[RMDB]
RNA sequence: GGGAACGACUCGAGUAGAGUCGAAAAGGCUAUGACUCGUGUCCGUCGGCGUAGCCGACAACAUGCCCAGGUAGCCCAGACCGUCAAGGCUACGGUGCGUUGCGACGCACGGUCUGAUUCUUCACAAAGUAGUCCCGAGUCUUCGGACUCGGGACAAGCAUCAAGGAUAGUUCGCUAUCCUUGAUGCAAAAGAAACAACAACAACAAC
Reactivity to 2A3 in 0.01 (KOAc 150mM, MgCl2 10mM, bicine 150mM(pH8.5), 24C), signal-to-noise 2, nucleotides 027 to 156: g030g020c060u060a070u150g060a090c010u000c030g010u000g030u030c030c070g040u000c020g000g000c240g180u230a030g010c000c010g020a010c000a000a060c030a030u230g020c000c000c030a000g010g060u010a000g000c000c020c070a050g010a010c010c000g070u110c030a050a070g020g000c000u030a000c060g000g050u020g000c010g010u030u060g070c280g130a000c000g020c000a000c010g050g000u000c000u020g050a110u100u070c050u150u160c090a100c040a220a120a080g050u180a070g000u050c000c010c020g010a000g000u000c000u050u080c150g130g000a000c000u000c000g010g000g000a000c000a000a000
Reactivity to DMS in 0.01 (KOAc 150mM, MgCl2 10mM, bicine 150mM(pH8.5), 24C), signal-to-noise 1, nucleotides 027 to 156: g020g000c000u000a090u020g000a110c000u000c030g010u000g030u020c020c060g030u000c010g050g030c030g020u010a120g020c000c000g000a100c060a040a030c020a120u020g020c000c020c040a150g040g000u000a030g010c030c000c070a080g010a080c040c110g000u000c080a110a150g070g010c010u000a010c000g000g040u010g020c060g050u000u010g040c020g010a180c020g000c000a040c050g010g000u010c020u010g000a180u010u010c020u010u000c050a190c160a060a120a200g010u010a200g000u000c000c000c000g020a040g020u000c010u010u000c300g070g000a020c010u000c000g000g000g000a000c020a000a030